[RMDB]
RNA sequence: GGGAACGACUCGAGUAGAGUCGAAAAAGUCGGCCUAACCCCUUCUUAGUAUUCCAUACCAAAGUUCCCUUUGGGUAUCUGUGGAUUCUUGAAGGGGCAGAUAGUACCAGCCACUUUGGUCUGCCUGCUACGAUAUAUGUUUCGACAUAUAUCGUAGAAAAGAAACAACAACAACAAC
Reactivity to DMS in 0.01 (KOAc 150mM, MgCl2 10mM, bicine 150mM(pH8.5), 24C), signal-to-noise 9, nucleotides 027 to 126: a040g010u000c120g040g010c040c040u010a150a160c010c010c000c000u000u000c000u010u000a060g020u010a020u000u000c010c010a020u000a060c010c010a020a030a040g010u010u000c160c160c010u000u000u000g000g000g000u000a060u010c300u010g030u000g000g000a020u000u000c010u000u000g000a010a010g010g010g010g040c070a010g010a110u010a070g010u010a090c120c150a180g000c030c030a040c050u000u000u000g000g010u000c080u000g010c030c020u000g010
Reactivity to 2A3 in 0.01 (KOAc 150mM, MgCl2 10mM, bicine 150mM(pH8.5), 24C), signal-to-noise 6, nucleotides 027 to 126: a000g090u100c120g020g020c010c010u130a300a300c020c000c020c010u000u000c010u040u080a030g010u040a050u080u010c010c010a000u020a180c010c000a050a010a050g070u200u180c160c050c000u010u020u010g060g020g010u080a150u090c060u050g040u020g000g000a000u010u010c000u000u030g000a000a010g020g010g010g000c000a000g000a030u120a030g030u040a060c030c040a020g020c010c000a030c020u050u040u030g060g040u040c050u070g080c000c020u050g040
Chemical mapping of a 177-nucleotide RNA with DMS and 2A3. 2A3 adducts were read by reverse transcription with SuperScript II with manganese. The reactions ran in a buffer of 150 mM KOAc, 10 mM MgCl2 and 150 mM bicine (pH 8.5), at 24 C. The 2A3 profile rests on 11,991 reads.